[RMDB]
RNA sequence: GGGAACGACUCGAGUAGAGUCGAAAACCGUAUCGGUUCGCCGAUACGGAAAAGUUAAUGCUGCUAACACACAUCUUAAGCAUGGCGGAGGUAUCGCUGGUGGGACUCCCCAGUUCGCUGGGGAGAAACUGCUGUGGGAAUUCGUUCCCACAGCAGUAAAAGAAACAACAACAACAAC
Reactivity to 2A3 in 0.01 (KOAc 150mM, MgCl2 10mM, bicine 150mM(pH8.5), 24C), signal-to-noise 2, nucleotides 027 to 126: c000c000g020u000a010u000c030g020g040u040u060c190g060c070c000g000a000u000a000c020g000g050a000a080a000a020g090u120u180a050a020u080g060c030u010g040c060u100a120a000c050a000c000a000c010a120u040c050u140u110a050a010g010c030a040u060g070g000c020g030g030a030g030g100u060a030u130c050g020c050u060g070g030u090g010g030g030a030c000u010c020c020c000c020a010g000u040u030c120g030c070u020g020g070g000g000a010g030a000a010
Reactivity to DMS in 0.01 (KOAc 150mM, MgCl2 10mM, bicine 150mM(pH8.5), 24C), signal-to-noise 2, nucleotides 027 to 126: c010c000g020u000a010u000c000g010g020u000u020c220g010c000c020g020a020u000a010c000g010g000a000a020a070a150g010u000u000a070a070u000g010c030u000g000c070u000a030a070c110a060c090a070c110a060u000c080u000u010a090a080g020c030a070u000g010g000c030g000g000a060g000g000u000a060u000c060g020c030u010g010g000u000g010g010g000a260c000u000c000c000c000c010a010g020u000u030c150g030c000u010g020g000g000g000a010g010a020a010
About this RNA: The record gives the reactivity of an RNA of 177 nucleotides to 2A3 and DMS. The reactions ran in a buffer of 150 mM KOAc, 10 mM MgCl2 and 150 mM bicine (pH 8.5), at 24 C. Reactivities are rounded to 0.1 and cut off at 0 and 3. Values cover nucleotides 27 to 126.